[RMDB]
RNA sequence: GGGAACGACUCGAGUAGAGUCGAAAAAGAAUGUACAUGGUAUUCGCACAACAGAAGAAAGAUAUGAUCACAUCUUGUUCGUGCUGGAUUGGGCUACGUGGAAGUACAAUCAUCCAGAAGAUGGAGUGAUUCCGAGGAGUAUCCGGUUCCGGUUGAAGGUUAGGCAUUAAUUCGUUAAUGCCUAACCAAAAGAAACAACAACAACAAC
Reactivity to 2A3 in 0.01 (KOAc 150mM, MgCl2 10mM, bicine 150mM(pH8.5), 24C), signal-to-noise 4, nucleotides 027 to 156: a000g080a020a010u030g020u050a050c020a100u060g040g060u090a070u010u090c050g050c010a050c010a050a050c020a050g080a090a010g100a080a270a000g080a050u100a080u230g090a060u130c070a030c000a110u000c010u090u110g030u100u050c090g000u010g020c020u050g010g030a020u030u100g030g010g000c020u030a020c040g030u050g010g060a070a030g030u040a060c050a040a040u050c000a040u010c030c030a030g040a110a010g080a130u050g000g020a050g040u070g010a030u070u010c040c040g010a030g010g020a020g030u050a080u050c030c000g010g000u080u000c010c010g040g010u030u060g070a140a090
Reactivity to DMS in 0.01 (KOAc 150mM, MgCl2 10mM, bicine 150mM(pH8.5), 24C), signal-to-noise 2, nucleotides 027 to 156: a090g000a120a050u010g000u000a060c050a100u000g020g010u010a090u000u000c060g060c060a130c030a040a150c050a080g020a070a110g020a120a110a100g010a090u000a050u000g010a090u010c080a070c060a090u000c010u000u000g010u010u000c070g020u010g010c020u010g020g010a080u000u000g010g040g020c030u000a040c070g000u010g000g000a090a040g000u000a050c030a040a070u000c020a060u000c020c010a130g010a100a160g010a060u010g000g000a160g020u000g010a080u000u000c040c010g030a100g020g010a120g040u000a050u000c030c000g010g020u000u000c010c010g030g020u000u010g020a120a130